[RMDB]
RNA sequence: GGGAACGACUCGAGUAGAGUCGAAAAUGCGCUCAGGCUUUCGAUCCGUCGUUGGCCACGGCGGCAGACUUGCCUGAUGAGCGGCAGGGAAUCGUUACGGGACCACUUGUCCGAUGGUCCCAUACAGCAUAUCUGCAAUCUUCGGAUUGCAGAUAUGAAAAGAAACAACAACAACAAC
Reactivity to 2A3 in 0.01 (KOAc 150mM, MgCl2 10mM, bicine 150mM(pH8.5), 24C), signal-to-noise 3, nucleotides 027 to 126: u060g010c010g000c020u000c020a010g030g000c000u010u040u040c040g080a160u120c010c010g010u010c000g000u020u130g080g020c030c000a010c010g000g020c000g000g000c010a010g020a020c060u070u130g010c010c010u060g020a080u120g020a020g030c030g040g020c030a060g060g020g080a050a090u120c090g050u080u130a070c070g030g010g000a000c000c000a030c040u110u190g100u150c040c020g040a100u000g000g010u020c000c000c000a000u010a000c010a020g070
Reactivity to DMS in 0.01 (KOAc 150mM, MgCl2 10mM, bicine 150mM(pH8.5), 24C), signal-to-noise 5, nucleotides 027 to 126: u010g010c030g000c010u000c010a040g000g010c010u000u010u000c020g000a220u010c010c010g000u000c000g000u000u010g010g010c190c100a140c010g000g000c010g000g010c300a130g000a040c120u000u010g000c000c010u000g000a070u010g000a060g010c020g010g000c070a100g000g020g000a070a060u000c100g010u010u000a060c100g000g000g010a020c010c000a040c080u000u000g020u010c100c070g000a170u000g000g000u000c000c000c010a000u000a020c150a160g000